The record gives the reactivity of an RNA of 177 nucleotides to 2A3 and DMS.
The reactions ran in a buffer of 150 mM KOAc, 10 mM MgCl2 and 150 mM bicine (pH 8.5), at 24 C.
The DMS profile rests on 8,579 reads.
Reactivities are given for positions 27 through 126.
RNA sequence: GGGAACGACUCGAGUAGAGUCGAAAAUUGAUGUAUGCGCAUAUGGGUGGACGAAAUUUUUCGGCCCUUACUCUUAAAUGAGUAGUGCAUAUUAAGGUCAGAAAACAUCACAGCUUCGGCUGUGAUGCCCCAGUAUAUUCUUCGGAAUAUACUGGGGAAAAGAAACAACAACAACAAC
Reactivity to 2A3 in 0.01 (KOAc 150mM, MgCl2 10mM, bicine 150mM(pH8.5), 24C), signal-to-noise 8, nucleotides 027 to 126: u040u050g020a020u090g010u020a010u020g000c020g010c040a050u060a100u300g050g000g050u210g300g050a030c020g040a030a090a110u210u180u020u020u010c010g060g000c000c000c000u010u010a000c000u010c000u030u130a150a260a270u160g000a000g000u010a010g010u000g000c000a000u030a010u060u100a050a020g090g030u020c030a020g150a070a110a010a020c000a000u000c000a000c000a000g010c000u070u110c190g130g000c000u000g000u000g000a000u000g000
Reactivity to DMS in 0.01 (KOAc 150mM, MgCl2 10mM, bicine 150mM(pH8.5), 24C), signal-to-noise 6, nucleotides 027 to 126: u000u010g010a130u010g010u000a000u000g010c010g020c010a120u010a060u000g010g000g040u000g010g010a060c020g000a010a050a300u010u000u000u000u000c000g010g000c000c000c000u000u000a010c000u000c000u000u000a070a140a080u010g000a010g010u000a030g010u000g010c010a010u000a020u000u000a090a140g010g010u000c070a110g010a080a080a090a300c010a000u000c000a000c000a000g010c010u000u010c210g030g010c000u000g010u000g000a000u000g000